RNA sequence: GGGAACGACUCGAGUAGAGUCGAAAACGGAUCGUCGCCAAGACUGAUGUCCCGACUGCGGACAGGCGCGCCGCUCAUGAUCUCCGUCGGCAACAGACGCAUCGGCAGAUUAUCGGUCACCAGCGGCUCAGGGCUAUAUAUUCGUAUAUAGCCCUGAAAAAGAAACAACAACAACAAC
Reactivity to DMS in 0.01 (KOAc 150mM, MgCl2 10mM, bicine 150mM(pH8.5), 24C), signal-to-noise 7, nucleotides 027 to 126: c060g010g010a090u010c100g030u010c010g000c020c040a090a180g000a050c020u010g010a050u000g020u010c000c000c010g010a060c180u020g000c010g000g000a110c130a080g010g020c120g000c160g000c000c000g020c090u000c090a080u020g000a070u000c060u000c040c030g000u010c010g000g000c050a130a120c100a100g010a160c040g000c050a090u000c020g000g000c110a050g000a040u000u030a010u000c030g000g000u000c010a050c200c270a120g000c020g000g000c020
Reactivity to 2A3 in 0.01 (KOAc 150mM, MgCl2 10mM, bicine 150mM(pH8.5), 24C), signal-to-noise 9, nucleotides 027 to 126: c040g050g030a090u110c040g020u010c010g000c010c020a050a040g020a010c010u030g010a020u030g020u020c010c000c000g020a050c140u050g000c030g040g030a110c030a100g060g080c050g000c050g010c070c010g020c030u070c040a160u200g100a160u060c070u040c100c040g080u090c010g030g000c010a070a010c010a140g070a040c020g000c010a020u020c010g020g000c060a040g010a020u140u150a020u220c010g010g000u010c010a030c060c020a020g010c000g000g000c000